[RMDB]
RNA sequence: GGGAACGACUCGAGUAGAGUCGAAAACGGCAAAAAAGCAAACUUGACCACCAAGGAUAAAAGAGAUCUUAUCCAAGGAUGCAAAAGAUAAUCUCACUUUUGACACCCACUGAUAUCGAACUUAAAGAAAACCGAGACUACUUCGGUAGUCUCGGAACGGUAUAACACCCUUCGGGGUGUUAUACCGAAAAGAAACAACAACAACAAC
Reactivity to 2A3 in 0.01 (KOAc 150mM, MgCl2 10mM, bicine 150mM(pH8.5), 24C), signal-to-noise 1, nucleotides 027 to 156: c000g030g000c060a000a010a000a070a070a030g060c080a100a130a010c020u080u090g060a040c010c010a010c000c030a090a070g000g000a010u020a050a080a000a030g140a040g010a020u000c000u040u010a000u000c010c020a000a020g000g010a020u010g020c010a070a060a000a000g020a010u060a180a130u040c040u000c030a060c010u040u000u010u000g070a010c010a060c010c000c000a040c200u110g100a040u060a060u240c040g030a070a040c010u090u100a180a130a060g030a020a110a070a000c000c000g010a000g000a000c000u000a000c000u000u030c090g050g030u000a000g000u000c000u000c000g000g000a000a000

This 207-nucleotide RNA was probed chemically with 2A3.
2A3 adducts were read by reverse transcription with SuperScript II with manganese.
Values cover nucleotides 27 to 156.
The RNA was probed in 150 mM KOAc, 10 mM MgCl2 and 150 mM bicine (pH 8.5) at 24 C.